Chemical mapping of a 207-nucleotide RNA with 2A3 and DMS. The 2A3 profile rests on 9,312 reads. The DMS profile rests on 4,267 reads. For 2A3 the reverse transcriptase was SuperScript II with manganese. Conditions: 150 mM KOAc, 10 mM MgCl2 and 150 mM bicine (pH 8.5), 24 C. Values cover nucleotides 27 to 156. For DMS the reverse transcriptase was MarathonRT.

RNA sequence: GGGAACGACUCGAGUAGAGUCGAAAACCGUAGGGAAAUUGUCAGACUGUAAACAUAGCUAUGAAGUUUCGUUCGAAAGAGCGAAAUGGAGCUAUGGAAGAAGGUCUUGGAUUUAUUUCCCUAAACGGAAACGUAAUCAAGUUCGCUUGAUUACGAACAUGCAAGUUAUGUUCGCAUAACUUGCAUGAAAAGAAACAACAACAACAAC
Reactivity to 2A3 in 0.01 (KOAc 150mM, MgCl2 10mM, bicine 150mM(pH8.5), 24C), signal-to-noise 5, nucleotides 027 to 156: c000c000g000u040a020g010g000g000a000a010a000u020u030g010u020c000a000g000a000c010u090g010u000a000a000a000c000a020u000a010g000c000u030a170u300g030a030a010g010u010u000u000c010g010u010u000c010g050a140a070a070g010a020g000c000g010a000a000a000u020g010g010a000g000c010u000a010u010g000g010a040a120g010a000a000g010g000u000c010u010u070g010g010a000u030u300u010a010u000u040u040c000c000c010u010a040a050a000c010g030g040a110a050a010c010g000u010a000a000u000c000a000a000g030u090u120c210g090c180u000u000g000a000u000u000a000c000g000a010a010
Reactivity to DMS in 0.01 (KOAc 150mM, MgCl2 10mM, bicine 150mM(pH8.5), 24C), signal-to-noise 3, nucleotides 027 to 156: c000c010g050u010a060g010g000g010a000a030a040u000u000g020u000c030a090g010a030c030u020g030u010a040a210a300c030a020u000a000g060c000u000a070u010g010a220a300g010u010u000u010c000g000u000u000c030g000a130a060a180g010a010g050c000g010a000a000a010u000g000g000a040g000c020u000a000u000g000g010a020a190g030a230a300g000g010u000c000u020u000g020g000a030u000u010u000a020u000u000u000c000c000c000u000a010a050a100c030g000g010a080a040a080c010g010u000a010a000u010c000a010a000g000u000u010c260g000c050u000u000g010a000u000u010a000c020g000a040a140